[RMDB]
RNA sequence: GGGAACGACUCGAGUAGAGUCGAAAAGACCUUCAGUUCGCUGAAGGUCGAUGAUCGUAAGAGAGAUUACCAUCUGUUAAGUGAUAUGGAUAAGAUCUCUCAGUGAACGUGCUUUCGAGCACGUUAAUCGCACACGCAUAUUCGUAUGCGUGUGCGAAAAAGAAACAACAACAACAAC
Reactivity to DMS in 0.01 (KOAc 150mM, MgCl2 10mM, bicine 150mM(pH8.5), 24C), signal-to-noise 1, nucleotides 027 to 126: g010a000c000c010u010u000c010a000g030u000u020c150g050c000u000g000a060a010g000g000u000c000g000a010u000g000a130u010c070g020u010a130a140g000a000g020a000g000a010u000u000a190c230c140a020u000c020u040g000u000u030a090a160g060u010g040a080u000a010u000g000g000a040u010a090a160g000a010u000c000u000c000u000c010a150g020u010g030a040a030c000g040u000g000c010u000u000u000c280g000a030g010c000a030c010g010u000u000a010a090
Reactivity to 2A3 in 0.01 (KOAc 150mM, MgCl2 10mM, bicine 150mM(pH8.5), 24C), signal-to-noise 1, nucleotides 027 to 126: g000a030c010c040u010u010c020a040g010u040u120c160g030c100u010g000a000a000g000g000u000c000g000a000u010g010a020u010c030g000u120a250a010g000a000g010a000g010a000u000u020a060c000c000a050u050c040u040g130u140u150a270a180g270u180g190a110u060a010u160g000g020a010u020a140a000g010a040u000c000u000c010u000c000a000g020u040g010a010a000c000g000u010g000c020u130u080u090c250g030a000g000c000a000c000g020u000u010a010a070

Chemical mapping of a 177-nucleotide RNA with DMS and 2A3. The reactions ran in a buffer of 150 mM KOAc, 10 mM MgCl2 and 150 mM bicine (pH 8.5), at 24 C. For DMS the reverse transcriptase was MarathonRT. It was measured as part of the RMDB library M2PK50. Reactivities are given for positions 27 through 126.